[RMDB]
RNA sequence: GGGAACGACUCGAGUAGAGUCGAAAAUCCUAAGUCCCAUGACAUGUCGGAGUACGUGGGACAUCGAUCAUGGGUCGGAAACGACCCAUGGGAGUCCCAUGAAACGACAACAGCAUGGGAUAUGGAAAAGGCAAACAAGGUUCGCCUUGUUUGCCAAGGCCUUAAUAAUGUUCGCAUUAUUAAGGCCAAAAGAAACAACAACAACAAC
Reactivity to 2A3 in 0.01 (KOAc 150mM, MgCl2 10mM, bicine 150mM(pH8.5), 24C), signal-to-noise 2, nucleotides 027 to 156: u040c020c000u040a070a050g040u000c000c010c010a010u020g050a120c070a090u040g030u000c010g000g000a030g020u000a060c100g000u010g020g000g000a000c000a150u160c030g070a010u020c010a010u000g000g000g020u000c000g010g010a060a050a020c010g000a000c030c010c010a010u010g000g010g000a000g010u000c020c000c000a040u090g000a000a020a010c020g010a010c000a010a010c080a020g040c000a010u010g050g000g000a010u040a010u030g000g030a050a110a090a030g010g010c010a000a000a000c010a010a020g030g040u010u080c090g190c020c010u000u000g010u000u000u010g000c000c000a000a010
An RNA of 207 nucleotides, treated with 2A3 and read out base by base.